An RNA of 177 nucleotides, treated with DMS and 2A3 and read out base by base.
RNA sequence: GGGAACGACUCGAGUAGAGUCGAAAAAUUCCCAAUCUUCUCUAUUUCCUUCUCCUCAAACACAGCCUGGGAGUGUUUGAGAAGGGGAUUGAGGAGAUUGGGAAGAAAAGCUCGUCUUCGGACGAGCGAUACGAGGACUGUUCGCAGUCCUCGUAUCAAAAGAAACAACAACAACAAC
Reactivity to DMS in 0.01 (KOAc 150mM, MgCl2 10mM, bicine 150mM(pH8.5), 24C), signal-to-noise 2, nucleotides 027 to 126: a140u000u000c000c000c000a000a010u000c000u000u000c000u000c000u000a060u000u010u000c000c000u000u010c010u010c050c190u000c030a010a010a010c000a010c010a090g010c080c040u000g000g000g030a120g040u000g000u000u010u000g000a010g010a030a070g000g000g000g000a030u000u000g000a020g020g020a000g010a010u000u010g000g000g000a000a010g000a060a080a080a150g010c000u000c000g010u000c000u000u010c230g010g010a010c000g020a010g000c000
Reactivity to 2A3 in 0.01 (KOAc 150mM, MgCl2 10mM, bicine 150mM(pH8.5), 24C), signal-to-noise 2, nucleotides 027 to 126: a000u020u000c010c000c000a000a000u020c000u010u000c000u000c000u020a050u030u040u070c000c000u080u190c030u050c040c030u030c030a000a020a000c000a010c000a050g090c010c060u100g030g070g040a100g000u010g000u010u020u000g010a000g000a000a000g000g000g000g000a000u010u030g010a000g000g000a010g000a000u000u010g000g000g000a010a010g030a000a110a000a010g000c000u000c000g000u010c010u040u050c260g090g010a010c000g000a000g000c000

The reactions ran in a buffer of 150 mM KOAc, 10 mM MgCl2 and 150 mM bicine (pH 8.5), at 24 C. DMS adducts were read by reverse transcription with MarathonRT. For 2A3 the reverse transcriptase was SuperScript II with manganese. The data come from the RNA Mapping Database (RMDB), library RFMREP.